[RMDB]
RNA sequence: GGGAACGACUCGAGUAGAGUCGAAAAGAUAUGGACCGUCUGUGACAGCUUGGACCCAACUUCGGAAACGAAGUUGGCUAGCUGCACAGAGCGGUCCUAAGUCAAACCGUGAUGUUCGCAUCACGGACACUCGGUGUUUCUUCGGAAACACCGAGUGAAAAGAAACAACAACAACAAC
Reactivity to 2A3 in 0.01 (KOAc 150mM, MgCl2 10mM, bicine 150mM(pH8.5), 24C), signal-to-noise 2, nucleotides 027 to 126: g030a050u050a060u200g010g000a000c010c020g030u010c020u010g090u000g100a300c020a000g020c030u150u290g130g130a210c010c040c000a000a000c020u050u000c000g000g050a030a050a060c010g000a000a000g010u000u020g030g000c000u020a000g050c000u020g000c020a000c000a010g070a000g000c000g060g000u000c000c000u000a020a000g010u010c030a050a010a110c010c000g010u000g000a010u010g050u130u140c300g030c180a010u030c000a000c000g010g000a030
Reactivity to DMS in 0.01 (KOAc 150mM, MgCl2 10mM, bicine 150mM(pH8.5), 24C), signal-to-noise 2, nucleotides 027 to 126: g000a040u030a300u030g010g010a010c000c020g020u000c000u000g000u000g010a290c020a010g040c000u000u000g040g000a090c300c010c000a000a000c000u000u010c000g000g010a250a120a180c000g000a000a000g010u000u000g010g010c000u020a010g010c000u000g000c000a000c010a000g000a040g000c010g040g010u000c000c010u000a000a100g000u000c050a150a100a180c010c020g000u000g010a020u020g010u020u000c180g000c030a000u000c000a010c000g010g000a180
Overview
Structure probing data (2A3 and DMS) for a 177-nucleotide construct. The reactions ran in a buffer of 150 mM KOAc, 10 mM MgCl2 and 150 mM bicine (pH 8.5), at 24 C. It was measured as part of the RMDB library TTRDES. 2A3 adducts were read by reverse transcription with SuperScript II with manganese. DMS adducts were read by reverse transcription with MarathonRT. For 2A3, 3,508 sequencing reads were counted.